[RMDB]
RNA sequence: GGGAACGACUCGAGUAGAGUCGAAAAGGCCUGGGUUAGGGUUAGGGUUAGUCCUGGUUCCACACCGCAGGUGGCCCUGUGACUAGGAGCAGCCACCUUGCAUCCCAGUUGCCCCAGCAGGAGAAUGAUUCAAGGAUCUAUUCGUAGAUCCUUGAAUAAAAGAAACAACAACAACAAC
Reactivity to 2A3 in 0.01 (KOAc 150mM, MgCl2 10mM, bicine 150mM(pH8.5), 24C), signal-to-noise 5, nucleotides 027 to 126: g020g020c000c000u020g030g000g020u030u070a030g040g030g010u030u100a050g060g000g050u080u110a050g050u070c000c010u010g020g030u080u040c020c000a050c010a010c040c030g000c020a010g000g000u000g020g020c030c010c000u020g030u050g070a130c140u120a050g020g050a080g090c090a020g010c030c010a010c000c000u010u170g000c000a040u020c000c000c010a010g050u090u200g300c010c010c010c010a040g070c010a010g030g110a050g030a120a170u170g050
Reactivity to DMS in 0.01 (KOAc 150mM, MgCl2 10mM, bicine 150mM(pH8.5), 24C), signal-to-noise 9, nucleotides 027 to 126: g000g010c070c010u000g000g010g020u000u000a040g010g020g010u000u000a160g010g000g010u010u000a090g010u000c010c010u000g010g000u000u010c040c040a100c290a080c070c050g010c030a050g010g020u000g010g020c140c040c030u000g010u010g010a150c210u020a030g000g000a160g010c160a200g010c000c010a020c020c000u000u010g040c040a120u000c010c000c010a030g000u010u000g010c020c000c010c050a120g010c060a040g010g010a080g000a120a090u010g000
The data come from the RNA Mapping Database (RMDB), library OK2TRN. Structure probing data (2A3 and DMS) for a 177-nucleotide construct. The DMS profile rests on 23,245 reads. For 2A3 the reverse transcriptase was SuperScript II with manganese. The 2A3 profile rests on 9,578 reads. The RNA was probed in 150 mM KOAc, 10 mM MgCl2 and 150 mM bicine (pH 8.5) at 24 C. High 2A3 reactivity points to a flexible backbone, as in loops and unpaired stretches.